[RMDB]
RNA sequence: GGGAACGACUCGAGUAGAGUCGAAAACCGUAUCGGUUCGCCGAUACGGAAAAGUUAAUGCUGCUAACACACAUCUUAAGCAUGGCGGUGGUAUCGGUGGUGGGACUCCCCAGUUCGCUGGGGAGAAGGAGCAUUACAAUUUCGAUUGUAAUGCUCCAAAAGAAACAACAACAACAAC
Reactivity to 2A3 in 0.01 (KOAc 150mM, MgCl2 10mM, bicine 150mM(pH8.5), 24C), signal-to-noise 4, nucleotides 027 to 126: c000c000g000u000a000u010c010g010g050u040u040c160g030c080c010g000a000u000a000c000g000g020a060a070a010a000g040u040u070a080a020u120g010c020u010g020c030u080a110a000c030a000c010a010c010a160u060c060u150u130a060a020g030c030a040u050g040g020c050g040g060u070g030g020u070a080u110c040g020g000u030g020g020u100g000g020g040a040c000u000c000c010c000c010a000g010u030u060c170g010c090u010g000g020g010g000a000g010a000a000
Reactivity to DMS in 0.01 (KOAc 150mM, MgCl2 10mM, bicine 150mM(pH8.5), 24C), signal-to-noise 5, nucleotides 027 to 126: c010c000g000u010a000u000c000g010g010u000u010c190g020c000c000g000a010u010a000c000g000g000a020a020a050a120g010u000u010a060a060u010g010c030u000g000c070u000a050a070c110a100c110a060c100a060u000c080u010u000a090a080g020c050a040u000g010g010c080g010g010u000g000g010u000a060u000c060g010g000u010g000g010u000g000g000g000a260c000u000c010c000c000c010a020g020u000u010c170g010c000u000g010g010g010g010a010g010a020a060